[RMDB]
Chemical mapping of a 177-nucleotide RNA with DMS.
RNA sequence: GGGAACGACUCGAGUAGAGUCGAAAAGAUAUGGAUGUUCCAUACUGACUCCAUCGAUCUCACGUAACAUCAGGAUCGGAAACGAUCCUGUGGUGAGGGAGGAGUUAGUAUGGAACAUCCUAAGUCAGACGUUACUUAUCUUCGGAUAAGUAACGUCAAAAGAAACAACAACAACAAC
Reactivity to DMS in 0.01 (KOAc 150mM, MgCl2 10mM, bicine 150mM(pH8.5), 24C), signal-to-noise 2, nucleotides 027 to 126: g010a030u000a300u000g010g020a020u010g010u000u000c000c000a010u000a010c000u000g010a000c010u000c000c000a300u000c220g000a060u030c010u000c000a000c000g050u000a090a200c190a040u000c000a020g000g000a010u000c000g000g010a060a130a230c000g000a000u000c000c010u000g010u000g030g010u000g000a020g000g000g000a000g010g000a010g000u000u000a000g020u010a000u010g000g000a000a000c000a000u010c000c000u000a030a050g010u010c030a140

For DMS, 2,275 sequencing reads were counted.